[RMDB]
Chemical mapping of a 177-nucleotide RNA with DMS and 2A3. Reactivities are rounded to 0.1 and cut off at 0 and 3. The DMS profile rests on 647 reads.
RNA sequence: GGGAACGACUCGAGUAGAGUCGAAAACUUCAACAAUGAAUCCUUCAACUAAACUUCCUUCUUCAAUGCGUGGAAAGGAUUUACAUUGUCCUAGUAUUGAGAAUGCCGUUAGCUCAUGUCCAAAAGAGUCCUAAAUCCACUUCGGUGGAUUUAGGACAAAAGAAACAACAACAACAAC
Reactivity to DMS in 0.01 (KOAc 150mM, MgCl2 10mM, bicine 150mM(pH8.5), 24C), signal-to-noise 1, nucleotides 027 to 126: c130u000u000c060a140a120c070a080a000u000g000a040a070u000c040c020u000u020c020a190a100c040u020a050a130a130c060u000u000c050c010u000u000c050u000u000c070a030a050u000g020c140g040u010g020g000a100a080a070g050g000a040u000u000u000a130c110a030u000u000g000u010c070c120u000a040g010u010a040u030u010g010a040g010a070a040u010g000c060c060g010u000u000a050g000c010u000c030a030u010g000u000c010c010a040a020a090a130g000a300
Reactivity to 2A3 in 0.01 (KOAc 150mM, MgCl2 10mM, bicine 150mM(pH8.5), 24C), signal-to-noise 1, nucleotides 027 to 126: c020u140u130c040a030a000c020a000a080u060g020a020a050u050c010c040u090u120c040a010a030c070u170a110a090a100c020u060u040c060c050u040u060c030u080u120c100a100a140u190g030c060g090u070g080g000a120a000a050g030g000a010u050u000u050a070c060a020u020u040g030u000c000c000u030a080g010u060a070u120u170g050a100g020a050a030u060g040c030c020g060u050u000a030g000c000u010c060a040u120g000u000c000c030a030a010a210a000g080a060